[RMDB]
RNA sequence: GGGAACGACUCGAGUAGAGUCGAAAAACAAAGAGAUCGAAAGAGCAAUGUGUAACUCAUCAUCCUAGCGAAUGGUUGGGCUCGAAAGAUCGAGUGUUACCAUCACAUGCCGGACGCUAGAAAAAAACUACCGUAAUAUGUUCGCAUAUUACGGUAGAAAAGAAACAACAACAACAAC
Reactivity to DMS in 0.01 (KOAc 150mM, MgCl2 10mM, bicine 150mM(pH8.5), 24C), signal-to-noise 6, nucleotides 027 to 126: a090c070a060a090a120g010a140g000a030u000c050g010a050a080a070g000a030g000c040a080a100u010g010u010g010u000a050a090c050u000c030a080u010c100a080u010c080c000u000a010g010c010g000a040a160u010g010g010u000u000g000g000g010c010u000c010g000a050a120a110g000a090u010c000g000a020g020u000g000u000u010a080c020c020a040u010c130a080c100a050u010g050c020c020g000g010a300c030g010c010u000a040g010a000a000a080a080a060a050a080
Reactivity to 2A3 in 0.01 (KOAc 150mM, MgCl2 10mM, bicine 150mM(pH8.5), 24C), signal-to-noise 6, nucleotides 027 to 126: a000c030a000a080a020g110a010g010a090u090c080g050a060a080a060g030a000g010c030a030a080u100g050u010g020u050a060a040c020u010c040a060u040c000a040u020c040c020u010a000g010c010g030a030a010u030g020g010u040u100g060g030g000c000u000c000g080a140a170a080g210a160u070c010g000a010g000u040g100u110u090a050c020c010a020u100c040a040c020a060u190g030c010c010g010g000a010c000g000c000u010a000g000a060a030a000a000a000a000a010
This 177-nucleotide RNA was probed chemically with DMS and 2A3. The RNA was probed in 150 mM KOAc, 10 mM MgCl2 and 150 mM bicine (pH 8.5) at 24 C. Values are in units of 0.01, from 0 to 300, in steps of 10. The 2A3 profile rests on 13,192 reads. 2A3 adducts were read by reverse transcription with SuperScript II with manganese. Reactivities are given for positions 27 through 126.